This 177-nucleotide RNA was probed chemically with DMS and 2A3. For DMS the reverse transcriptase was MarathonRT. The RNA was probed in 150 mM KOAc, 10 mM MgCl2 and 150 mM bicine (pH 8.5) at 24 C. For 2A3, 2,141 sequencing reads were counted. For 2A3 the reverse transcriptase was SuperScript II with manganese. The DMS profile rests on 1,441 reads. Reactivities are given for positions 27 through 126. It was measured as part of the RMDB library RFM100.
RNA sequence: GGGAACGACUCGAGUAGAGUCGAAAAGGUGCAUUCGCCUAUAUUCUGCGGAAUUUCGCCUGGCGUAUGGAUGAAGAGGAUUUUAUCCGAAUCCUUACGCGCCAGGUUGUCUGCGGAAAUCUGCCAGCCUUCAUGGCGAGUUCGCUCGCCAUGAAGGAAAAGAAACAACAACAACAAC
Reactivity to DMS in 0.01 (KOAc 150mM, MgCl2 10mM, bicine 150mM(pH8.5), 24C), signal-to-noise 1, nucleotides 027 to 126: g000g000u000g010c080a170u000u060c060g040c030c000u000a060u020a030u010u000c000u060g070c000g000g020a040a130u010u050u030c300g000c010c030u000g000g000c000g000u000a100u000g000g000a050u000g000a230a120g000a300g020g010a050u000u030u030u030a090u060c040c000g000a200a080u000c000c000u020u000a110c240g010c000g070c000c000a000g000g040u000u010g000u000c010u000g010c050g000g000a000a040a040u000c100u000g010c100c020a110g010
Reactivity to 2A3 in 0.01 (KOAc 150mM, MgCl2 10mM, bicine 150mM(pH8.5), 24C), signal-to-noise 4, nucleotides 027 to 126: g020g000u030g030c130a200u230u190c030g030c020c000u080a080u000a020u110u000c000u000g000c010g040g020a080a040u100u200u220c080g000c000c000u010g000g000c000g000u030a090u180g080g050a020u070g080a070a110g100a080g050g020a050u010u050u140u290a060u150c010c000g000a020a010u020c000c010u050u070a070c090g000c010g000c000c000a000g000g000u010u060g010u000c000u020g000c000g000g000a020a000a020u070c040u080g080c010c020a040g000